RNA sequence: GGGAACGACUCGAGUAGAGUCGAAAAGAUAUGGAUCUGUCCCACGGACGAAGAACAUUCUCGGAAACGAGAAUGGGAGUCCCAGUGGGAGCAGAUCCUAAGUCAAAGACAAACUUCGGUUUGUCAAGCUCUUCUAACACUUCGGUGUUAGAAGAGCAAAAGAAACAACAACAACAAC
Reactivity to 2A3 in 0.01 (KOAc 150mM, MgCl2 10mM, bicine 150mM(pH8.5), 24C), signal-to-noise 1, nucleotides 027 to 126: g050a030u110a090u120g030g000a020u020c010u010g050u070c010c000c010a000c000g000g000a000c030g140a300a220g000a030a030c000a000u020u030c000u030c020g030g030a140a110a060c020g000a000g000a010a000u000g000g000g030a010g000u000c000c040c080a070g000u000g000g000g000a100g080c010a000g010a000u010c000c000u020a030a020g010u010c060a120a050a080g000a000c020a020a020a000c010u040u090c240g090g000u000u010u020g020u000c010a000a020
Reactivity to DMS in 0.01 (KOAc 150mM, MgCl2 10mM, bicine 150mM(pH8.5), 24C), signal-to-noise 1, nucleotides 027 to 126: g000a050u020a300u010g010g000a000u010c000u000g000u000c000c000c000a030c000g020g000a060c030g030a090a140g000a070a220c020a010u000u000c000u000c000g030g010a130a170a160c000g000a040g000a000a000u010g020g000g000a150g010u000c000c030c300a240g060u000g000g000g000a040g010c000a010g000a000u010c000c000u010a010a040g000u000c000a070a150a200g000a010c000a000a000a000c010u000u010c250g020g010u000u010u000g000u000c020a070a170
Chemical mapping of a 177-nucleotide RNA with 2A3 and DMS. The DMS profile rests on 952 reads. Source: RMDB library TTRDES, as collected in RNAgym. Conditions: 150 mM KOAc, 10 mM MgCl2 and 150 mM bicine (pH 8.5), 24 C. The 2A3 profile rests on 1,980 reads.